Chemical mapping of a 177-nucleotide RNA with DMS. It was measured as part of the RMDB library TTRDEL. Conditions: 150 mM KOAc, 10 mM MgCl2 and 150 mM bicine (pH 8.5), 24 C.
RNA sequence: GGGAACGACUCGAGUAGAGUCGAAAAGAUAUGGAACCCAAGCUAGCUGCGUCGGAAACGACCAGCUUGGACCUUGAGGUUCCUAAGUCAAAAGCGAAAGAAAGGCCUUCGGGCCUUUCUUUCGCAACUAAGAUUGAGACUUCGGUCUCAAUCUUAGAAAAGAAACAACAACAACAAC
Reactivity to DMS in 0.01 (KOAc 150mM, MgCl2 10mM, bicine 150mM(pH8.5), 24C), signal-to-noise 2, nucleotides 027 to 126: g000a060u010a300u000g000g010a020a000c020c000c000a000a030g010c010u000a000g000c000u010g000c250g050u010c010g000g020a140a070a160c000g010a000c000c000a010g010c010u000u010g050g010a080c300c000u000u000g010a160g020g010u000u010c000c000u000a010a110g010u010c030a050a100a130a160g010c000g000a010a000a000g010a040a020a000g010g000c010c000u000u010c210g040g010g030c000c000u010u000u000c000u000u010u000c000g020c000a000a030